[RMDB]
RNA sequence: GGGAACGACUCGAGUAGAGUCGAAAAACAGAAAAAAGGAGUAUAAAUUAGAUUUGCAAACGGACGGUACUAAAUACCGUCACUUUUACGUCUAACUUAUCGUUAACUCUGCAAAAAGAAAACAAGAAAAACAAGCGUGAGUUCGCUCACGCUUGAACAUGCUUAUCUUGUUCGCAAGAUAAGCAUGAAAAGAAACAACAACAACAAC
Reactivity to DMS in 0.01 (KOAc 150mM, MgCl2 10mM, bicine 150mM(pH8.5), 24C), signal-to-noise 2, nucleotides 027 to 156: a130c050a210g020a000a020a090a030a120a090g020g010a120g030u000a090u010a030a020a020u000u010a030g040a020u000u010u000g100c030a010a040a030c110g020g090a020c020g000g040u000a040c030u030a040a040a300u000a010c050c000g000u000c000a010c000u000u010u010u000a020c000g000u020c000u000a000a000c010u000u010a000u010c110g020u000u000a030a050c060u000c010u000g000c050a030a020a050a070a130g000a010a060a020a100c110a010a090g000a060a090a130a090a060c000a000a050g010c010g000u010g010a070g010u000u020c300g110c020u000c020a000c020g000c020u000u010g000a030a060
Reactivity to 2A3 in 0.01 (KOAc 150mM, MgCl2 10mM, bicine 150mM(pH8.5), 24C), signal-to-noise 4, nucleotides 027 to 156: a000c030a020g110a030a110a010a020a000a050g030g010a020g010u070a030u020a100a020a010u020u010a000g010a020u060u060u280g060c060a040a040a020c010g000g000a000c000g000g010u020a030c050u210a080a100a070u060a010c010c000g000u000c000a050c010u010u000u020u030a020c020g000u000c010u010a010a020c010u020u030a020u070c030g070u030u040a020a020c010u000c010u040g000c060a030a050a020a040a050g090a030a100a010a010c060a050a050g140a120a090a020a000a000c000a000a000g010c010g000u010g000a010g010u040u110c170g040c110u000c000a000c000g000c000u000u000g000a000a000
Source: RMDB library M2RFOK, as collected in RNAgym. This 207-nucleotide RNA was probed chemically with DMS and 2A3. The DMS profile rests on 2,896 reads. DMS adducts were read by reverse transcription with MarathonRT. The reactions ran in a buffer of 150 mM KOAc, 10 mM MgCl2 and 150 mM bicine (pH 8.5), at 24 C. Reactivities are given for positions 27 through 156. 2A3 adducts were read by reverse transcription with SuperScript II with manganese. The 2A3 profile rests on 3,840 reads.